Chemical mapping of a 177-nucleotide RNA with DMS and 2A3. The DMS profile rests on 1,324 reads. The RNA was probed in 150 mM KOAc, 10 mM MgCl2 and 150 mM bicine (pH 8.5) at 24 C. For DMS the reverse transcriptase was MarathonRT.
RNA sequence: GGGAACGACUCGAGUAGAGUCGAAAAUCUAUCACCAGCCCAUCUUUACGACACGAAUGGGCUGUUGCAAAUUACGUAUAGCUCUUGCAACAUCGUGUCGAAACGUUCCCAAGCUAUACGCCACAAAACAUCGGUAACGAUUCGUCGUUACCGAUGUAAAAGAAACAACAACAACAAC
Reactivity to DMS in 0.01 (KOAc 150mM, MgCl2 10mM, bicine 150mM(pH8.5), 24C), signal-to-noise 2, nucleotides 027 to 126: u010c090u000a110u010c080a120c090c020a020g020c020c000c000a090u000c110u020u000u020a260c050g020a000c000a020c020g010a040a010u030g000g010g010c080u000g000u000u000g000c120a020a020a110u000u010a050c040g000u000a020u000a010g000c000u010c220u000u010g000c020a050a050c090a020u000c010g020u000g020u000c000g000a040a110a260c020g000u000u000c010c020c000a190a020g030c030u000a010u000a000c010g010c180c190a110c130a040a010a070
Reactivity to 2A3 in 0.01 (KOAc 150mM, MgCl2 10mM, bicine 150mM(pH8.5), 24C), signal-to-noise 2, nucleotides 027 to 126: u030c010u020a170u080c030a030c100c000a020g020c000c000c000a050u020c060u090u170u130a050c030g030a000c020a000c000g070a120a090u070g000g040g000c020u000g010u000u010g000c040a010a040a110u210u080a020c020g010u010a000u000a020g000c020u030c020u130u130g000c030a020a000c000a050u040c000g000u010g020u000c000g040a150a090a010c020g010u000u000c000c010c000a010a000g000c000u000a010u010a000c000g050c030c010a110c010a020a100a020